[RMDB]
The record gives the reactivity of an RNA of 177 nucleotides to 2A3 and DMS.
Reactivities are rounded to 0.1 and cut off at 0 and 3.
2A3 adducts were read by reverse transcription with SuperScript II with manganese.
The reactions ran in a buffer of 150 mM KOAc, 10 mM MgCl2 and 150 mM bicine (pH 8.5), at 24 C.
Reactivities are given for positions 27 through 126.

RNA sequence: GGGAACGACUCGAGUAGAGUCGAAAAAAGUGGUGUGGCACUGCUCCGGCGAGGACGUGGGCGGACCGGCGGGAUGGGCUCCAGUCACCGGCUCGGUGGGCGACCGUCCCUUCCCAUGAGUCCACACGAAUACAAUAGUCUUCGGACUAUUGUAUUCAAAAGAAACAACAACAACAAC
Reactivity to 2A3 in 0.01 (KOAc 150mM, MgCl2 10mM, bicine 150mM(pH8.5), 24C), signal-to-noise 4, nucleotides 027 to 126: a000a000g120u100g030g020u040g020u040g050g010c040a010c060u040g020c020u020c030c010g060g030c050g080a120g040g060a030c030g030u160g010g040g010c060g020g020a050c040c040g040g050c030g000g000g000a020u040g010g020g020c030u020c040c010a020g090u080c010a010c040c010g220g040c130u110c110g000g050u040g020g030g030c030g020a020c000c000g000u020c000c000c020u010u040c020c000c000a020u080g040a000g040u010c000c010a010c000a010c060
Reactivity to DMS in 0.01 (KOAc 150mM, MgCl2 10mM, bicine 150mM(pH8.5), 24C), signal-to-noise 5, nucleotides 027 to 126: a060a030g030u010g020g030u000g010u010g010g010c050a120c030u000g010c070u010c010c040g000g000c050g010a170g000g010a090c090g010u000g000g010g010c050g020g010a130c040c050g010g000c300g010g000g000a040u000g000g000g000c020u000c020c050a150g000u010c020a040c030c010g020g020c130u010c050g030g010u000g000g000g000c070g000a060c020c010g000u000c000c000c000u000u000c010c000c010a110u000g000a110g000u010c010c020a020c040a080c100